[RMDB]
RNA sequence: GGGAACGACUCGAGUAGAGUCGAAAAAGCUUGAGUGGUGGAUCUAGCUCAGUCGGGGUUCACCAAAGUAGUAGGCAUGAAGAGGCAUUAAAGCAAUCCUUCGCCCUGACUUCUUGGCUAAUAACUCUGUCCCAUACAUUUUCGAAUGUAUGGGACAAAAAGAAACAACAACAACAAC
Reactivity to DMS in 0.01 (KOAc 150mM, MgCl2 10mM, bicine 150mM(pH8.5), 24C), signal-to-noise 2, nucleotides 027 to 126: a100g010c020u000u020g030a080g050u000g030g010u000g000g000a030u000c030u000a130g030c040u000c220a100g030u010c020g020g020g000g000u000u000c050a020c010c010a030a050a050g000u000a030g020u000a050g000g000c040a120u010g010a030a030g000a140g000g000c030a090u000u000a070a120a150g010c010a060a050u000c090c010u000u000c020g010c150c010c020u000g000a030c020u000u000c040u000u000g000g000c030u010a090a060u010a110a110c060u000c040
Reactivity to 2A3 in 0.01 (KOAc 150mM, MgCl2 10mM, bicine 150mM(pH8.5), 24C), signal-to-noise 1, nucleotides 027 to 126: a010g030c050u120u140g060a090g060u070g110g010u000g000g020a010u020c000u020a020g050c060u070c240a110g080u190c010g090g000g000g000u000u000c000a020c000c020a010a010a010g000u000a000g000u000a000g040g000c050a060u300g000a040a020g060a030g120g000c020a020u050u300a230a050a010g000c000a020a110u060c000c010u000u000c000g000c000c050c020u020g060a040c000u000u020c000u020u060g020g000c010u020a110a020u060a230a000c040u060c060
An RNA of 177 nucleotides, treated with DMS and 2A3 and read out base by base.